[RMDB]
RNA sequence: GGGAACGACUCGAGUAGAGUCGAAAAAAAAAAAGAUAUGGAGGUGAUCACUAGGGAGCGAACGUGAGUACUCGGAAACGAGUACUCUCGCAUCGAUCUAGUGAGUCACCUCCUAAGUCAAAAAAAAGAUAUAUACAUUCUUCGGAAUGUAUAUAUCAAAAGAAACAACAACAACAAC
Reactivity to DMS in 0.01 (KOAc 150mM, MgCl2 10mM, bicine 150mM(pH8.5), 24C), signal-to-noise 1, nucleotides 027 to 126: a000a000a090a130a080a190a120g000a010u000a300u000g000g000a060g000g050u000g000a100u000c010a010c000u020a000g000g000g000a080g030c030g000a040a110c020g000u000g000a000g010u000a020c000u000c020g000g000a090a110a170c000g040a020g010u000a010c010u000c010u010c000g000c050a120u000c010g000a150u000c000u000a010g010u000g000a030g040u000c000a000c000c000u000c040c000u000a000a030g010u020c000a000a010a000a080a080a070a150a150